[RMDB]
RNA sequence: GGGAACGACUCGAGUAGAGUCGAAAAGAAAGAAAGAAAGAGUGCCUGCUGGCUUGUCACUUCCAAUACAUGCUGUGGUCCCACCAUCCCGUCCAUGUAGAGAGAGUGACAGGUUGUCGGGCCUCAAUGAAAGACUAUGAUUCGUCAUAGUCUUUCAAAAAGAAACAACAACAACAAC
Reactivity to DMS in 0.01 (KOAc 150mM, MgCl2 10mM, bicine 150mM(pH8.5), 24C), signal-to-noise 8, nucleotides 027 to 126: g010a090a090a100g000a100a090a110g000a090a100a130g000a020g000u010g030c010c010u000g010c030u000g010g000c000u000u000g000u000c010a010c010u010u010c030c010a050a180u000a010c000a010u000g010c190u020g010u020g000g000u000c010c030c050a120c120c090a100u010c030c010c020g000u020c220c010a010u000g000u000a000g000a300g000a060g000a010g010u000g000a010c000a000g000g010u010u000g000u000c000g000g000g000c020c010u010c000a040a080
Reactivity to 2A3 in 0.01 (KOAc 150mM, MgCl2 10mM, bicine 150mM(pH8.5), 24C), signal-to-noise 9, nucleotides 027 to 126: g110a020a080a010g110a040a070a010g100a050a110a020g020a000g020u260g010c000c000u010g010c020u020g010g000c000u000u000g000u000c000a000c000u130u040c020c000a040a020u020a010c000a000u010g020c050u100g080u190g100g020u100c050c040c010a060c030c010a040u100c010c020c010g030u040c030c000a000u000g000u010a010g010a000g010a000g000a000g060u000g000a000c000a000g000g000u010u000g020u020c000g000g010g000c000c000u000c010a010a020